Chemical mapping of a 177-nucleotide RNA with DMS and 2A3. Source: RMDB library TTRINS, as collected in RNAgym. The 2A3 profile rests on 2,919 reads. DMS adducts were read by reverse transcription with MarathonRT. Reactivities are given for positions 27 through 126. Conditions: 150 mM KOAc, 10 mM MgCl2 and 150 mM bicine (pH 8.5), 24 C.
RNA sequence: GGGAACGACUCGAGUAGAGUCGAAAAGAUAUGGAUUUCACUACCCACCUUCCUUUGCCGAAGAACCUGUUAGUAUCGGAAACGAUACUAACAGGGGAGGCAAAGAGAAGAGGUGAAAUCCUAAGUCGAUGAGUCAUUACUUCGGUAAUGACUCAUCAAAAGAAACAACAACAACAAC
Reactivity to DMS in 0.01 (KOAc 150mM, MgCl2 10mM, bicine 150mM(pH8.5), 24C), signal-to-noise 1, nucleotides 027 to 126: g000a130u020a040u010g030g010a000u000u000u000c000a010c030u000a130c000c030c000a300c050c000u000u000c000c000u000u000u020g000c000c000g040a100a220g000a250a190c000c000u000g010u010u000a000g020u000a000u020c000g010g000a110a030a300c000g040a010u000a000c000u000a000a010c000a000g000g000g030g000a090g020g000c020a000a000a000g010a140g030a000a000g010a120g000g010u010g000a000a000a000u000c030c000u000a070a060g000u020c190
Reactivity to 2A3 in 0.01 (KOAc 150mM, MgCl2 10mM, bicine 150mM(pH8.5), 24C), signal-to-noise 2, nucleotides 027 to 126: g170a050u280a200u300g010g000a000u000u000u020c000a010c020u270a300c000c010c000a040c000c000u000u030c000c040u030u010u020g000c040c020g220a300a140g000a080a010c000c000u000g000u000u000a010g000u010a000u000c010g060g000a080a050a010c010g010a000u000a010c000u010a010a000c010a010g000g000g000g010a010g000g000c000a000a020a000g010a010g010a000a000g000a020g000g000u010g010a000a000a000u000c010c000u000a090a000g300u260c140